The record gives the reactivity of an RNA of 177 nucleotides to 2A3 and DMS. 2A3 adducts were read by reverse transcription with SuperScript II with manganese. The DMS profile rests on 10,446 reads.

RNA sequence: GGGAACGACUCGAGUAGAGUCGAAAAGAAAAUUAGCAUUCGUCUUGUAACCAACCGGGCUUUUGACGAAUGCAUCGUUAACAAUCCAGGAGAGCCUGGAAGCCCGUAUCGCAGGUAAAGAAAGAAAAUGACUAAUAUACUUCGGUAUAUUAGUCAUAAAAGAAACAACAACAACAAC
Reactivity to 2A3 in 0.01 (KOAc 150mM, MgCl2 10mM, bicine 150mM(pH8.5), 24C), signal-to-noise 7, nucleotides 027 to 126: g070a010a100a020a030u240u150a040g000c010a000u000u000c000g030u000c040u100u190g120u130a090a130c040c020a060a050c100c050g020g010g010c030u090u100u060u190g010a000c000g000a000a000u010g010c000a020u060c020g010u020u070a080a060c060a110a080u020c000c000a000g000g020a190g040a030g270c010c010u010g000g000a000a010g030c000c000c000g010u030a080u100c070g000c090a050g050g000u100a080a110a030g140a050a080a010g120a040a130a050
Reactivity to DMS in 0.01 (KOAc 150mM, MgCl2 10mM, bicine 150mM(pH8.5), 24C), signal-to-noise 5, nucleotides 027 to 126: g010a090a070a070a090u020u040a120g010c000a010u020u000c020g010u000c000u010u000g010u040a100a130c060c050a130a110c300c130g040g000g020c030u010u030u020u010g020a000c000g000a020a010u000g010c010a030u010c120g000u020u010a100a100c110a130a100u000c000c000a030g000g030a210g020a140g020c020c000u000g000g000a020a030g000c020c000c000g020u010a070u010c140g020c070a040g000g000u000a060a060a110g000a070a080a110g010a060a060a090